[RMDB]
RNA sequence: GGGAACGACUCGAGUAGAGUCGAAAAACUAAUCCAAAGCAAGUAUAGGAGAACAGGUUGUUAACUAUUUUUAGGCAGAUAAAAAAUAGUAUUUGACAGUCUAACACUAACUGAACAAUAAGUGUUAAAAAGUCGUCUCUGUUCGCAGAGACGACAAGGUACGGUUGUAGUUCGCUACAACCGUACCAAAAGAAACAACAACAACAAC
Reactivity to 2A3 in 0.01 (KOAc 150mM, MgCl2 10mM, bicine 150mM(pH8.5), 24C), signal-to-noise 2, nucleotides 027 to 156: a000c050u090a080a030u030c010c010a050a010a000g010c010a050a000g030u060a060u120a120g020g030a050g030a100a070c080a090g100g010u060u010g020u020u080a030a020c000u000a030u020u000u010u010u040a040g100g000c110a030g060a210u190a070a050a000a000a000a010u020a000g000u020a050u020u060u050g070a020c000a000g000u000c000u010a000a000c000a000c000u000a010a000c000u040g030a040a000c000a000a020u020a020a000g010u000g020u000u070a070a110a000a010a010g010u000c000g020u000c000u000c010u000g090u070u020c140g030c040a000g000a000g000a010c000g000a000c000a000a000